[RMDB]
This 177-nucleotide RNA was probed chemically with DMS and 2A3.
RNA sequence: GGGAACGACUCGAGUAGAGUCGAAAAGAAAGAACAAAGCACCUCGAAGACCCGUUUACACGGGCGACUCGUCAGUCUCGAGUGAGGUGCAAAAACGAGACUGACAAAAAGAAAAAGAAAAAGAAAAAUUAGCAUAGUACUUCGGUACUAUGCUAAUAAAAGAAACAACAACAACAAC
Reactivity to DMS in 0.01 (KOAc 150mM, MgCl2 10mM, bicine 150mM(pH8.5), 24C), signal-to-noise 2, nucleotides 027 to 126: g000a090a090a060g000a210a070c060a060a140a210g080c030a000c000c000u010c020g020a140a120g030a250c020c000c020g010u000u040u090a020c270a110c000g000g010g000c100g000a150c120u020c040g010u040c010a020g020u000c000u000c000g010a070g000u020g000a000g020g000u010g000c040a000a010a050a130a120c000g000a010g000a000c000u000g010a040c000a060a010a090a070a040g060a050a030a090a150a130g050a030a060a030a160a090g000a070a060a130a060
Reactivity to 2A3 in 0.01 (KOAc 150mM, MgCl2 10mM, bicine 150mM(pH8.5), 24C), signal-to-noise 3, nucleotides 027 to 126: g050a040a040a010g070a040a020c080a130a110a020g010c000a010c000c010u020c010g020a100a050g140a300c000c000c000g040u090u160u130a100c120a020c020g000g000g010c010g010a010c050u070c120g000u010c000a000g000u000c010u000c010g040a050g060u130g020a000g000g000u000g010c010a030a040a000a020a000c020g000a000g000a000c010u030g000a000c010a000a090a000a000a000g060a030a060a010a010a000g090a020a090a020a040a000g140a020a080a000a010
Source information:
The 2A3 profile rests on 4,405 reads. Source: RMDB library OK1LIB, as collected in RNAgym. For DMS, 2,542 sequencing reads were counted.